[RMDB]
RNA sequence: GGGAACGACUCGAGUAGAGUCGAAAAGCUUCUGAAGAGCGCUCCAGAGCGCGGCCAGGAACUGACAAUCGGUCGAAUUGAUAUGUUGGUAAACGUCACCGGCGCGAAUUCUCCAGAAGAGGCUCGCGCCUGACUGAUUUUUCGAAAUCAGUCAGGCAAAAGAAACAACAACAACAAC
Reactivity to DMS in 0.01 (KOAc 150mM, MgCl2 10mM, bicine 150mM(pH8.5), 24C), signal-to-noise 3, nucleotides 027 to 126: g000c020u000u010c020u000g000a050a090g010a110g010c020g000c030u000c060c090a140g010a150g010c050g020c010g030g000c080c060a100g010g010a120a030c020u010g000a070c040a030a020u000c040g030g000u010c150g010a120a120u000u010g000a050u020a070u010g010u000u010g030g010u000a070a060a070c100g010u000c040a040c080c020g000g010c060g000c020g010a060a100u010u000c010u010c020c030a070g000a080a130g010a090g000g000c040u000c030g010c220
Reactivity to 2A3 in 0.01 (KOAc 150mM, MgCl2 10mM, bicine 150mM(pH8.5), 24C), signal-to-noise 2, nucleotides 027 to 126: g000c020u050u000c000u040g070a100a050g000a040g000c050g020c000u040c050c030a100g030a020g070c050g010c030g030g120c020c040a060g040g070a100a050c020u030g040a000c010a020a040u010c030g050g100u060c100g150a100a130u090u070g020a030u100a220u200g050u010u010g050g010u090a160a140a110c030g040u070c030a020c040c030g060g010c020g010c010g030a050a070u120u020c010u000c000c010a090g020a120a040g000a090g040g000c030u030c040g070c000
The record gives the reactivity of an RNA of 177 nucleotides to DMS and 2A3. Conditions: 150 mM KOAc, 10 mM MgCl2 and 150 mM bicine (pH 8.5), 24 C. The data come from the RNA Mapping Database (RMDB), library OK2TRN. For 2A3, 1,438 sequencing reads were counted. DMS adducts were read by reverse transcription with MarathonRT.